[RMDB]
Conditions: 150 mM KOAc, 10 mM MgCl2 and 150 mM bicine (pH 8.5), 24 C. This 177-nucleotide RNA was probed chemically with DMS and 2A3. For 2A3 the reverse transcriptase was SuperScript II with manganese. For DMS the reverse transcriptase was MarathonRT. For DMS, 2,706 sequencing reads were counted.

RNA sequence: GGGAACGACUCGAGUAGAGUCGAAAAUCACGCUGCUCGACGGCGCCUACCACGAGGUUGACUCCUCGGAAAUGGCGUUCAAGAUCGCGGGCUCGCAGGUGCUCAAAAAGGCUGCCGCACUUGCGCAAACAUGUCGAUCAUUCGUGAUCGACAUGUUAAAAGAAACAACAACAACAAC
Reactivity to DMS in 0.01 (KOAc 150mM, MgCl2 10mM, bicine 150mM(pH8.5), 24C), signal-to-noise 4, nucleotides 027 to 126: u000c090a040c040g000c050u010g020c050u000c020g030a160c300g000g010c010g010c000c000u010a030c080c060a210c010g020a020g020g000u000u020g010a230c170u020c010c000u010c020g000g000a020a130a090u010g000g020c000g010u010u000c050a110a260g000a040u000c050g000c040g000g000g020c080u010c030g010c000a020g010g010u000g010c020u020c140a050a060a070a170a060g010g020c070u000g010c090c110g000c010a020c010u000u030g010c030g000c300a070
Reactivity to 2A3 in 0.01 (KOAc 150mM, MgCl2 10mM, bicine 150mM(pH8.5), 24C), signal-to-noise 3, nucleotides 027 to 126: u090c020a010c090g030c030u090g000c010u010c030g060a050c050g040g000c020g030c000c000u050a060c040c030a130c060g010a010g000g030u070u100g070a100c230u000c030c000u010c000g000g000a070a060a030u110g000g010c020g010u090u150c040a050a030g030a060u080c050g000c010g020g010g030c040u050c020g010c010a010g030g010u020g000c000u000c100a080a090a050a060a000g150g000c080u080g090c050c020g010c010a000c020u010u020g010c030g000c040a030